[RMDB]
Chemical mapping of a 177-nucleotide RNA with DMS and 2A3.

RNA sequence: GGGAACGACUCGAGUAGAGUCGAAAAGGCAGCAGCGCCAUAUGCAUGGCGCGGAUGCGGCCGAUCGCGGCCUGAACCAACGCCGACGCGCCGCCGUCGGGCAUCAACCCCACGUUGGUGUGAGCGACGAUAUCCGUGAUUUCGAUCACGGAUAUCGAAAAGAAACAACAACAACAAC
Reactivity to DMS in 0.01 (KOAc 150mM, MgCl2 10mM, bicine 150mM(pH8.5), 24C), signal-to-noise 4, nucleotides 027 to 126: g020g010c010a050g020c020a150g010c010g000c010c000a000u000a130u020g030c280a050u010g000g010c010g010c000g000g000a080u020g010c010g010g030c020c010g000a140u010c070g020c020g010g010c050c050u000g000a110a060c040c030a030a010c050g000c010c000g000a030c020g010c070g000c050c070g010c040c010g000u010c030g000g000g030c200a060u010c150a110a230c010c030c010c050a300c050g010u000u000g000g000u000g020u000g020a090g010c180g000a180
Reactivity to 2A3 in 0.01 (KOAc 150mM, MgCl2 10mM, bicine 150mM(pH8.5), 24C), signal-to-noise 2, nucleotides 027 to 126: g020g010c030a000g030c010a030g000c020g000c020c020a040u080a070u210g300c160a020u020g000g000c000g020c000g030g020a000u070g000c000g010g020c000c000g010a040u080c040g000c000g020g000c000c050u030g090a020a010c020c000a010a000c040g040c050c000g000a010c000g030c030g050c010c040g020c040c010g000u000c000g000g000g020c010a090u120c020a030a090c000c000c040c020a040c060g020u000u010g000g000u020g050u060g030a050g070c050g010a010
Notes
DMS adducts were read by reverse transcription with MarathonRT. The data come from the RNA Mapping Database (RMDB), library OK2TST. The DMS profile rests on 3,660 reads. Values are in units of 0.01, from 0 to 300, in steps of 10.